Structure probing data (2A3) for a 177-nucleotide construct. Conditions: 150 mM KOAc, 10 mM MgCl2 and 150 mM bicine (pH 8.5), 24 C. For 2A3 the reverse transcriptase was SuperScript II with manganese. Source: RMDB library RFM100, as collected in RNAgym.

RNA sequence: GGGAACGACUCGAGUAGAGUCGAAAAGCAGGUGAAUGCAACGUCAAGCGAUGGGCGUUGCGCUCCAUAUUGUCUUACUUCCUUUUUUGAAUUACUGCAUAGCACAAUUGAUUCGUACGACGCCGACCCCCCGUAGCAAGUUCGCUUGCUACGGGGGAAAAGAAACAACAACAACAAC
Reactivity to 2A3 in 0.01 (KOAc 150mM, MgCl2 10mM, bicine 150mM(pH8.5), 24C), signal-to-noise 2, nucleotides 027 to 126: g000c030a020g000g000u150g050a120a000u040g030c000a000a010c000g000u010c010a000a150g060c080g020a010u190g070g000g000c000g000u000u000g030c000g000c000u000c000c000a000u040a080u150u120g030u020c000u000u020a110c070u100u030c000c000u080u040u080u050u080u210g170a020a040u040u100a020c020u020g020c000a050u010a080g050c070a000c000a020a100u100u010g100a110u050u050c000g000u000a050c010g020a040c030g120c060c000g010a150c000